[RMDB]
RNA sequence: GGGAACGACUCGAGUAGAGUCGAAAACUGUAAUCCCAGCACUUUGGGAGGCUGAGGUAGGCGGAUCUCAGGUCAGGAGUUUGAGACCAGCCUGGCCAAUGUGGCAAAAUGCCUCUACUAUACAAAAAUUAGCUGGGUGUGGUCGUGCAUGCCUGUAACUCCGAAUACAGUUCGCUGUAUUCGGAGUAAAAGAAACAACAACAACAAC
Reactivity to 2A3 in 0.01 (KOAc 150mM, MgCl2 10mM, bicine 150mM(pH8.5), 24C), signal-to-noise 1, nucleotides 027 to 156: c040u090g000u090a030a130u050c010c010c020a010g060c030a030c010u070u200u190g070g000g000a010g020g030c020u020g000a040g010g040u130a020g010g030c060g120g000a220u000c010u000c040a010g070g050u040c040a080g150g050a270g070u010u150u140g010a020g000a000c020c000a020g000c040c000u040g010g000c010c010a040a150u280g040u100g070g060c040a060a020a120a180u130g020c000c040u040c000u100a040c000u040a050u030a050c030a060a140a100a060a170u030u060a020g010c000u010g000g000g000u030g020u000g030g000u030c080g010u000g020c090a030u110g020c000c000u100g000u100a040